Chemical mapping of a 207-nucleotide RNA with 2A3. Values cover nucleotides 27 to 156.
RNA sequence: GGGAACGACUCGAGUAGAGUCGAAAAACCUUAUUUUGAGAAGCUGAGGGAUUUGGCCCAUAGAAGCUUCACCAACCGACUUUAAAUAGCACGGUGCUAAUACCAACGAGCAACUCGAAUGAUAAGUAAAACGUUGACAAGUUCGCUUGUCAACGAAGAUCUUCACAUUCUUCGGAAUGUGAAGAUCAAAAGAAACAACAACAACAAC
Reactivity to 2A3 in 0.01 (KOAc 150mM, MgCl2 10mM, bicine 150mM(pH8.5), 24C), signal-to-noise 2, nucleotides 027 to 156: a000c050c000u100u030a200u060u040u090u090g090a060g000a000a060g000c010u030g020a020g020g020g010a100u060u080u140g050g000c020c020c010a020u060a130g140a080a010g030c000u020u000c000a000c000c000a020a030c020c000g100a030c050u100u150u150a100a130a150u140a090g020c030a030c240g000g000u050g020c050u080a060a040u030a130c010c020a000a060c040g080a040g130c020a040a080c060u020c060g060a070a060u080g060a060u040a120a030g050u090a000a140a050a050c020g000u000u010g000a000c000a000a000g000u040u110c130g010c160u000u000g010u000c000a000a000c000g000a000a020